The record gives the reactivity of an RNA of 177 nucleotides to 2A3 and DMS. Conditions: 150 mM KOAc, 10 mM MgCl2 and 150 mM bicine (pH 8.5), 24 C.

RNA sequence: GGGAACGACUCGAGUAGAGUCGAAAACUUGCUGCAGGACGCCCUCCGCAUCUCACAGAACUUCCUGUCCAGCAUCAAUGAGGAGAUCACACCCCGACGGCAGUCCAUGACGGUGAAGAAGGGAGAGCACCUGUCAUGUAUUCGUACAUGACAGGUGAAAAGAAACAACAACAACAAC
Reactivity to 2A3 in 0.01 (KOAc 150mM, MgCl2 10mM, bicine 150mM(pH8.5), 24C), signal-to-noise 2, nucleotides 027 to 126: c010u020u090g000c010u040g000c020a070g010g010a030c020g050c020c030c020u040c030c020g020c030a110u020c030u020c010a110c010a090g150a220a080c030u060u010c010c000u030g040u050c040c020a000g010c000a050u080c030a060a130u150g030a060g070g020a070g000a040u090c010a000c000a010c030c020c000c000g010a050c060g000g000c020a020g040u020c010c000a020u050g020a040c040g040g050u090g020a020a020g040a020a020g060g020g000a050g010a000g040
Reactivity to DMS in 0.01 (KOAc 150mM, MgCl2 10mM, bicine 150mM(pH8.5), 24C), signal-to-noise 5, nucleotides 027 to 126: c080u000u010g000c020u010g010c040a060g000g000a070c140g010c040c030c080u010c030c070g030c090a090u010c040u000c060a080c100a100g010a090a110c110u000u000c020c020u000g010u000c050c030a060g020c030a050u010c130a050a080u010g010a110g020g000a070g010a080u000c080a070c110a180c070c010c000c030g010a100c090g010g010c050a050g020u000c030c050a050u010g020a050c070g000g010u010g000a040a060g020a060a100g020g000g000a060g000a080g010